[RMDB]
RNA sequence: GGGAACGACUCGAGUAGAGUCGAAAAGCUAGGCAUUUCGAUGCCUAGCGAGCGCAGAGUCUAUGCAUCUCUCAAUCACACAACAGCCGUGUCUAUGCGUGGGAGUAUCCCUCUUCGGAGGGAUAAAGAAAAGUACAACUUUCGAGUUGUACUUUUCAAAAGAAACAACAACAACAAC
Reactivity to DMS in 0.01 (KOAc 150mM, MgCl2 10mM, bicine 150mM(pH8.5), 24C), signal-to-noise 8, nucleotides 027 to 126: g010c000u000a000g000g010c000a010u000u000u010c170g020a030u000g010c000c000u000a000g000c010g000a050g010c110g020c060a070g010a110g010u000c050u010a070u000g010c050a090u000c040u000c020u000c050a090a100u000c090a070c060a050c070a070a100c110a090g010c070c080g010u010g000u000c050u010a050u010g010c070g030u010g000g010g000a080g010u000a020u000c000c000c000u000c000u000u010c170g010g010a020g010g000g010a000u000a000a060a090
Reactivity to 2A3 in 0.01 (KOAc 150mM, MgCl2 10mM, bicine 150mM(pH8.5), 24C), signal-to-noise 6, nucleotides 027 to 126: g000c000u000a000g010g010c000a000u050u090u120c240g080a010u020g010c010c000u000a000g000c000g000a020g000c070g000c030a020g020a030g130u020c030u090a100u130g020c020a110u030c030u000c010u010c050a060a100u100c020a030c000a010c010a140a120c020a070g090c060c040g060u050g040u030c030u090a080u100g020c010g030u060g020g050g000a030g020u020a010u000c000c020c010u000c010u020u030c180g060g010a000g000g010g000a000u010a010a010a010
The record gives the reactivity of an RNA of 177 nucleotides to DMS and 2A3.
DMS (dimethyl sulfate) methylates the pairing face of unpaired adenines and cytosines.
The data come from the RNA Mapping Database (RMDB), library M2PK50.
For DMS the reverse transcriptase was MarathonRT.